This 207-nucleotide RNA was probed chemically with DMS and 2A3. Reactivities are given for positions 27 through 156. The data come from the RNA Mapping Database (RMDB), library M2RFPK. High 2A3 reactivity points to a flexible backbone, as in loops and unpaired stretches. For DMS, 9,586 sequencing reads were counted. Reactivities are rounded to 0.1 and cut off at 0 and 3.
[RMDB]
RNA sequence: GGGAACGACUCGAGUAGAGUCGAAAAUCCGACACUCAUAGGCUCUCCAACCCAACUCCUACUCAAUACGUCCUCGUCGUACAGAACGGUAACAUGUUUUCCGAACAUCCGCGCUUGGGUAUACGAGAAAGGCGUAGAUUAUUCGUAAUCUACGCAACAUGUUUAUACAUUUCGAUGUAUAAACAUGAAAAGAAACAACAACAACAAC
Reactivity to DMS in 0.01 (KOAc 150mM, MgCl2 10mM, bicine 150mM(pH8.5), 24C), signal-to-noise 3, nucleotides 027 to 156: u000c000c030g020a120c050a090c020u000c010a080u000a090g010g010c010u000c030u020c030c030a070a110c020c010c010a100a110c050u010c010c010u000a040c030u010c040a090a090u000a070c040g010u010c020c000u000c000g030u000c000g000u000a070c040a050g010a080a090c010g020g010u010a080a080c110a090u010g010u000u000u000u000c080c070g000a050a060c040a080u000c030c040g010c040g010c060u000u000g000g020g020u000a060u000a100c030g010a100g010a080a090a100g010g010c000g040u000a010g000a030u000u000a030u000u000c270g030u000a020a020u000c000u000a000c000g010c010a020a020
Reactivity to 2A3 in 0.01 (KOAc 150mM, MgCl2 10mM, bicine 150mM(pH8.5), 24C), signal-to-noise 7, nucleotides 027 to 156: u040c020c020g040a030c040a000c050u090c020a100u080a100g050g010c010u010c010u010c050c020a050a060c020c000c000a020a030c030u040c020c010u030a050c010u030c060a030a090u060a130c050g050u040c010c010u030c020g040u010c010g000u050a050c030a070g080a120a030c010g040g020u080a070a040c040a110u120g040u040u040u050u070c050c040g020a030a010c010a050u030c030c030g040c020g010c070u050u040g010g030g030u090a040u030a070c030g020a020g090a120a080a010g140g000c000g000u000a000g000a000u000u010a020u030u050c070g010u030a000a010u010c000u000a000c000g000c000a000a000